Chemical mapping of a 177-nucleotide RNA with DMS and 2A3. Source: RMDB library OK1LIB, as collected in RNAgym. For 2A3 the reverse transcriptase was SuperScript II with manganese. The RNA was probed in 150 mM KOAc, 10 mM MgCl2 and 150 mM bicine (pH 8.5) at 24 C.
[RMDB]
RNA sequence: GGGAACGACUCGAGUAGAGUCGAAAACUCAGCAUGACGAGAAACGCGGUGUGCACGUUCUCUGUGCAGCUUCUUGAAGUAAUCUUGGGCUUAGAACUUGGUGUAGUCCCUUAUCGUCGUCGCCGACCCCAUAUUGACCGUUCGCGGUCAAUAUGGGAAAAGAAACAACAACAACAAC
Reactivity to DMS in 0.01 (KOAc 150mM, MgCl2 10mM, bicine 150mM(pH8.5), 24C), signal-to-noise 3, nucleotides 027 to 126: c070u000c030a140g010c040a060u010g000a060c030g030a020g000a030a080a060c150g000c080g000g020u030g010u020g010c000a170c060g000u020u010c020u010c060u070g000u020g020c060a040g000c020u000u040c050u000u000g000a070a120g030u030a050a050u020c070u030u010g000g000g010c020u000u010a060g030a080a050c050u020u020g020g010u010g020u010a110g000u000c010c010c020u000u010a040u020c030g000u010c020g020u010c100g020c040c060g030a150c130
Reactivity to 2A3 in 0.01 (KOAc 150mM, MgCl2 10mM, bicine 150mM(pH8.5), 24C), signal-to-noise 9, nucleotides 027 to 126: c020u020c010a010g010c020a030u100g040a030c020g000a010g080a080a120a020c080g030c090g030g050u120g040u080g060c020a010c040g050u100u030c050u000c050u100g050u100g040c030a020g010c010u130u100c020u080u170g140a130a070g070u150a090a140u030c020u050u050g020g020g000c010u020u030a040g020a090a050c020u040u150g090g010u060g040u050a040g100u140c010c000c000u040u100a090u060c020g010u000c010g020u030c060g010c020c020g050a110c000